[RMDB]
RNA sequence: GGGAACGACUCGAGUAGAGUCGAAAACUUGAGCCUCGGCUUCGAGCGAGGCGCGCGCGUGAUGUUCGGCGUCUCGCUGCACGGCAAUCUGAAGCGCGCGUCGAUGCCCAAGCUCGGCAAUCCGCCACGAUAGGUCCCUAUUCGUAGGGACCUAUCGAAAAGAAACAACAACAACAAC
Reactivity to 2A3 in 0.01 (KOAc 150mM, MgCl2 10mM, bicine 150mM(pH8.5), 24C), signal-to-noise 2, nucleotides 027 to 126: c010u060u190g000a020g000c000c010u050c170g050g000c020u060u060c160g050a080g020c020g020a060g040g010c010g000c000g040c000g000c010g130u170g070a080u050g010u180u230c000g040g010c020g110u100c130u120c140g100c040u050g000c010a020c060g070g010c040a050a260u010c020u070g120a150a020g000c000g000c040g000c000g010u020c000g060a090u180g000c000c000c000a030a000g000c020u000c070g000g020c030a020a070u060c070c060g000c010c060a070
Reactivity to DMS in 0.01 (KOAc 150mM, MgCl2 10mM, bicine 150mM(pH8.5), 24C), signal-to-noise 2, nucleotides 027 to 126: c020u000u000g010a290g010c000c030u000c300g020g010c010u010u010c080g000a070g040c020g010a220g000g010c010g010c000g020c040g010c030g010u010g000a040u010g020u010u000c030g020g010c040g010u000c150u010c200g000c040u000g020c190a050c020g050g000c100a070a070u010c030u010g000a140a150g000c000g010c040g030c000g010u000c010g000a120u010g000c000c010c030a070a060g000c010u010c230g010g000c030a120a140u020c030c040g010c050c050a160
Record summary: The data come from the RNA Mapping Database (RMDB), library OK2TRN. An RNA of 177 nucleotides, treated with 2A3 and DMS and read out base by base. For DMS the reverse transcriptase was MarathonRT. The reactions ran in a buffer of 150 mM KOAc, 10 mM MgCl2 and 150 mM bicine (pH 8.5), at 24 C.